[RMDB]
RNA sequence: GGGAACGACUCGAGUAGAGUCGAAAAAAGAAUGACAGCACAUCUUCUUUCCUCGGUGUAGGUGCAGUCUGUAAAUUAGAAAUGUUGGUGCAAUGAACCAUCAACUAUUGUAACAGGGGAAUUUAUAUACAGGAAGGAUAUUCGUAUCCUUCCUGUAAAAAGAAACAACAACAACAAC
Reactivity to 2A3 in 0.01 (KOAc 150mM, MgCl2 10mM, bicine 150mM(pH8.5), 24C), signal-to-noise 4, nucleotides 027 to 126: a000a000g140a060a040u130g020a010c010a010g010c030a010c010a080u020c010u150u040c020u050u090u050c020c000u000c030g050g060u070g040u130a100g000g070u010g000c020a010g030u010c020u010g130u110a000a190a200u130u110a110g070a110a080a060u120g000u020u000g000g010u000g040c100a150a190u240g030a090a060c030c010a010u000c000a000a020c010u120a070u080u200g110u090a050a030c000a040g000g000g030g040a010a010u020u160u000a110u030a010
Reactivity to DMS in 0.01 (KOAc 150mM, MgCl2 10mM, bicine 150mM(pH8.5), 24C), signal-to-noise 7, nucleotides 027 to 126: a060a060g010a090a050u010g000a040c040a090g030c030a050c030a190u010c040u000u000c040u000u000u000c000c000u000c100g000g020u010g020u000a050g010g020u000g010c020a080g020u000c020u000g000u000a050a080a110u010u000a080g010a090a070a080u010g000u000u000g000g010u000g000c130a110a130u010g010a130a120c300c000a010u000c000a020a030c010u010a110u000u000g000u000a080a060c060a120g010g000g020g010a070a050u010u000u000a050u000a170

This 177-nucleotide RNA was probed chemically with 2A3 and DMS. The 2A3 profile rests on 3,060 reads. The reactions ran in a buffer of 150 mM KOAc, 10 mM MgCl2 and 150 mM bicine (pH 8.5), at 24 C.